[RMDB]
RNA sequence: GGGAACGACUCGAGUAGAGUCGAAAAGCGAUAUAACCCGCGCUGUAACAACGUUCAAGCGCGAGCUGUAGCGAAUCGGCCGCGGGUGGAUCUAACAUAUCAAUCUUAGCUACGUUAAAUGUUAAACGAUCGGCGCUGGUGAUUACUGGUGUCUCGCACAUAGGCGUGUAUUCGUACACGCCUAUGUAAAAGAAACAACAACAACAAC
Reactivity to DMS in 0.01 (KOAc 150mM, MgCl2 10mM, bicine 150mM(pH8.5), 24C), signal-to-noise 2, nucleotides 027 to 156: g000c040g010a100u000a020u000a090a040c000c000c050g050c010g010c010u000g010u000a100a140c060a130a160c040g010u010u000c130a130a070g010c010g070c230g010a120g040c020u010g010u010a040g020c030g000a150a140u010c040g000g010c040c040g100c040g020g000g010u020g010g010a080u000c060u000a060a100c080a110u000a100u010c100a050a060u010c070u000u010a120g020c060u000a040c050g000u010u000a020a090a050u010g000u010u010a060a060a100c090g000a070u000c020g000g080c000g020c020u010g050g000u000g000a150u000u000a070c080u000g000g020u000g030u010c000u000c000g000c300
Reactivity to 2A3 in 0.01 (KOAc 150mM, MgCl2 10mM, bicine 150mM(pH8.5), 24C), signal-to-noise 5, nucleotides 027 to 156: g020c030g020a020u030a000u040a180a040c000c010c010g000c000g000c000u030g080u140a070a100c140a080a080c100g050u080u060c110a070a010g010c000g000c040g030a010g000c010u060g040u130a010g030c010g040a040a070u090c010g030g030c080c060g010c030g020g000g010u020g000g020a020u000c010u100a070a050c030a070u160a020u190c050a170a020u030c060u120u170a020g050c050u100a040c060g060u120u110a080a120a060u120g010u080u130a090a130a000c090g030a050u050c050g000g000c000g000c020u020g010g010u080g070a240u140u260a040c010u020g010g010u010g020u030c010u000c030g030c000
Chemical mapping of a 207-nucleotide RNA with DMS and 2A3. For DMS, 4,183 sequencing reads were counted. Values cover nucleotides 27 to 156.